[RMDB]
RNA sequence: GGGAACGACUCGAGUAGAGUCGAAAAUCGACGCCACAUCAAGAUCCGACCCAGCGACGUCUACCGGCCCAUCGGAGAGGUAUGGGACGAGAUCAACCGGACCACGCCCCCAAUAAAGUGGCCUACGAAACGAGACAGAUUUCGAUCUGUCUCGUUUAAAAGAAACAACAACAACAAC
Reactivity to DMS in 0.01 (KOAc 150mM, MgCl2 10mM, bicine 150mM(pH8.5), 24C), signal-to-noise 3, nucleotides 027 to 126: u030c010g000a080c140g000c000c000a010c040a050u030c130a110a120g000a050u030c060c000g000a130c020c010c010a020g010c070g030a030c020g030u000c010u000a090c060c010g010g010c050c100c040a020u050c030g010g000a100g020a090g040g010u050a030u010g000g000g000a120c020g000a100g010a030u000c050a120a130c070c020g000g000a070c030c010a050c090g000c010c000c000c000c040a150a070u040a020a070a120g010u000g010g010c000c060u010a040c050g010
Reactivity to 2A3 in 0.01 (KOAc 150mM, MgCl2 10mM, bicine 150mM(pH8.5), 24C), signal-to-noise 5, nucleotides 027 to 126: u090c020g050a040c040g020c030c010a040c000a100u150c110a100a060g030a070u000c020c010g020a050c020c000c000a000g030c020g110a040c030g150u040c020u100a260c010c020g040g030c040c010c030a080u110c040g060g030a080g010a050g080g060u100a060u020g010g000g010a010c030g030a060g010a110u100c020a020a030c000c030g030g020a030c000c010a000c050g080c000c000c000c000c020a050a070u200a130a080a020g030u070g030g000c000c010u040a060c080g100